[RMDB]
RNA sequence: GGGAACGACUCGAGUAGAGUCGAAAACAAGCUGGGUCAUGGUUCCUCCUCUCCUGUAGGUCGUGUCUGAUCGGUAGGCGCCUCCUGUCUGGCGAGCACCGCCUCCCACUCCUUCACCCACCUCGGCAGUCAUCCUUCUGUUCGCAGAAGGAUGACUAAAAGAAACAACAACAACAAC
Reactivity to DMS in 0.01 (KOAc 150mM, MgCl2 10mM, bicine 150mM(pH8.5), 24C), signal-to-noise 1, nucleotides 027 to 126: c080a120a110g010c010u000g010g030g020u000c090a140u000g010g020u010u000c060c020u000c040c030u000c030u010c010c000u000g010u010a110g030g000u000c060g000u020g000u010c040u010g010a100u010c020g010g030u000a040g020g010c020g010c040c050u010c040c070u010g020u010c050u000g020g000c110g000a090g040c080a120c020c020g020c070c010u000c020c010c010a110c080u000c060c020u000u010c060a120c010c020c030a040c120c050u000c030g010g010c170
Reactivity to 2A3 in 0.01 (KOAc 150mM, MgCl2 10mM, bicine 150mM(pH8.5), 24C), signal-to-noise 1, nucleotides 027 to 126: c030a040a010g020c060u090g030g000g060u120c050a070u090g000g020u050u050c020c030u010c010c000u010c010u010c020c000u040g060u080a030g090g070u020c020g020u000g100u050c080u050g020a130u100c020g070g030u090a080g000g070c000g000c010c010u090c010c040u110g070u240c050u010g040g000c020g010a000g000c020a020c030c050g020c010c000u000c000c010c000a020c000u000c000c000u000u070c030a020c020c000c020a030c000c040u020c020g000g040c000
Annotation: The data come from the RNA Mapping Database (RMDB), library OK2TST. Chemical mapping of a 177-nucleotide RNA with DMS and 2A3. DMS adducts were read by reverse transcription with MarathonRT. In probing experiments dimethyl sulfate is read out at A N1 and C N3, which are open when not base-paired. The 2A3 profile rests on 1,065 reads. The RNA was probed in 150 mM KOAc, 10 mM MgCl2 and 150 mM bicine (pH 8.5) at 24 C.